[RMDB]
RNA sequence: GGGAACGACUCGAGUAGAGUCGAAAAAAUCAAAAGGAAAUCUCCUUACAUCCUUGGAGAUAUCCCGUUGUGUAGCUCUGUUCGAAUUAACAAGAAGAUCAGCAGGGAGGACAUCCUUAUUAGAGAGACCCAAGCAUUGAUUCGUCAAUGCUUGGGUAAAAGAAACAACAACAACAAC
Reactivity to DMS in 0.01 (KOAc 150mM, MgCl2 10mM, bicine 150mM(pH8.5), 24C), signal-to-noise 1, nucleotides 027 to 126: a010a060u000c050a000a090a040a070g020g010a030a150a060u000c030u000c040c010u000u000a110c190a160u010c100c140u000u000g000g030a040g000a000u000a060u000c000c010c100g000u030u000g040u000g010u000a020g010c040u010c030u000g030u000u000c090g040a090a060u000u000a040a040c160a110a150g010a070a090g030a050u010c030a000g010c050a030g000g000g040a010g000g020a080c110a050u000c030c000u000u000a100u000u000a060g030a090g020a190g010
This 177-nucleotide RNA was probed chemically with DMS. The RNA was probed in 150 mM KOAc, 10 mM MgCl2 and 150 mM bicine (pH 8.5) at 24 C. Values cover nucleotides 27 to 126. For DMS the reverse transcriptase was MarathonRT. The DMS profile rests on 737 reads.